This 177-nucleotide RNA was probed chemically with 2A3 and DMS. DMS adducts were read by reverse transcription with MarathonRT.
RNA sequence: GGGAACGACUCGAGUAGAGUCGAAAAAGAAAGGAAUAUCAAAGAUCGAAAGAUCAACAAUGCUCGAUAGAUAUACAUCCCAAAUGAAGUAACAAAUCGAGCAACUUCAACGGAAACGACAAAAAAAUCAGAUAUACCUGUUCGCAGGUAUAUCUGAAAAAGAAACAACAACAACAAC
Reactivity to 2A3 in 0.01 (KOAc 150mM, MgCl2 10mM, bicine 150mM(pH8.5), 24C), signal-to-noise 1, nucleotides 027 to 126: a000g080a040a060a020g060g030a160a010u000a000u100c050a100a050a010g030a010u000c000g040a100a010a000g010a000u020c010a000a000c020a030a070u020g000c000u000c010g000a010u030a050g070a010u030a000u020a110c000a020u070c010c010c000a020a000a010u160g020a090a010g030u030a130a050c070a050a150a000u010c000g000a000g020c000a000a000c010u090u060c030a050a060c060g070g050a050a020a060c020g070a020c150a000a070a020a000a000a000a050
Reactivity to DMS in 0.01 (KOAc 150mM, MgCl2 10mM, bicine 150mM(pH8.5), 24C), signal-to-noise 2, nucleotides 027 to 126: a030g010a120a100a110g000g000a170a050u000a030u000c020a120a190a240g000a010u000c000g000a110a140a050g000a010u000c000a060a180c210a080a070u000g010c000u000c050g000a010u000a100g020a020u000a000u010a050c140a100u000c000c000c010a080a080a070u000g000a020a010g000u000a060a110c160a070a060a040u000c010g000a000g050c000a030a090c090u020u000c040a020a230c140g000g000a040a120a060c010g000a030c170a000a010a000a110a090a090a090